[RMDB]
RNA sequence: GGGAACGACUCGAGUAGAGUCGAAAAGAGGGCCUCCUCCCUCGCCUUCGAGCCGGGUCUUGCAUCGGGUUGGCUCAUCCUGAGACCGGGGAGCUUCGACGAUCUCUUGUCUCUCCUGAAGGAGGAAUCAGGUAAUAGUGUUCGCACUAUUACCUGAAAAAGAAACAACAACAACAAC
Reactivity to DMS in 0.01 (KOAc 150mM, MgCl2 10mM, bicine 150mM(pH8.5), 24C), signal-to-noise 3, nucleotides 027 to 126: g000a030g000g000g020c080c080u000c030c020u010c000c000c010u000c060g010c020c010u000u000c050g010a050g010c010c020g010g010g000u000c050u000u010g020c130a080u000c140g000g010g000u010u000g000g000c020u010c030a140u010c020c020u000g020a040g010a030c020c030g000g000g020g000a040g010c070u000u010c220g000a150c190g000a080u000c010u000c000u000u000g000u000c010u000c030u010c060c080u010g020a070a040g010g010a050g000g010a220a150
Reactivity to 2A3 in 0.01 (KOAc 150mM, MgCl2 10mM, bicine 150mM(pH8.5), 24C), signal-to-noise 3, nucleotides 027 to 126: g020a010g000g020g010c010c040u050c000c020u040c010c010c000u010c020g000c010c000u010u090c070g010a010g000c000c010g130g000g080u010c070u110u130g090c030a100u120c070g100g080g100u030u060g010g000c010u010c010a030u000c010c040u030g010a010g020a030c020c030g000g010g000g020a020g030c020u160u150c080g180a110c070g040a070u000c010u000c000u020u000g010u000c000u010c010u020c000c030u080g070a080a020g040g020a020g020g000a020a080